The record gives the reactivity of an RNA of 177 nucleotides to 2A3. 2A3 adducts were read by reverse transcription with SuperScript II with manganese. The reactions ran in a buffer of 150 mM KOAc, 10 mM MgCl2 and 150 mM bicine (pH 8.5), at 24 C. High 2A3 reactivity points to a flexible backbone, as in loops and unpaired stretches. Values cover nucleotides 27 to 126.
[RMDB]
RNA sequence: GGGAACGACUCGAGUAGAGUCGAAAACGAGUGCCAAUCCAAAGCCCUGCAGCGCCGUUUGCACCUUUGAUGUGCGCUCCACUUCGACGACAACAUAAAGGGUGGUGGGCGUUGCGUGGAGGGCAUGAGUCAGGUCGGACUUCGGUCCGACCUGACUAAAAGAAACAACAACAACAAC
Reactivity to 2A3 in 0.01 (KOAc 150mM, MgCl2 10mM, bicine 150mM(pH8.5), 24C), signal-to-noise 1, nucleotides 027 to 126: c060g010a080g090u080g000c010c020a040a140u000c000c000a150a080a000g090c030c000c000u000g000c010a000g020c000g020c020c020g080u030u060u180g000c010a060c010c000u040u040u210g210a140u170g000u000g000c000g000c100u000c050c020a090c030u160u260c090g090a050c050g090a080c000a160a000c000a020u130a070a140a140g020g110g210u030g010g010u030g110g020g070c000g040u000u030g000c030g010u080g000g000a030g010g000g000c000a020u040g000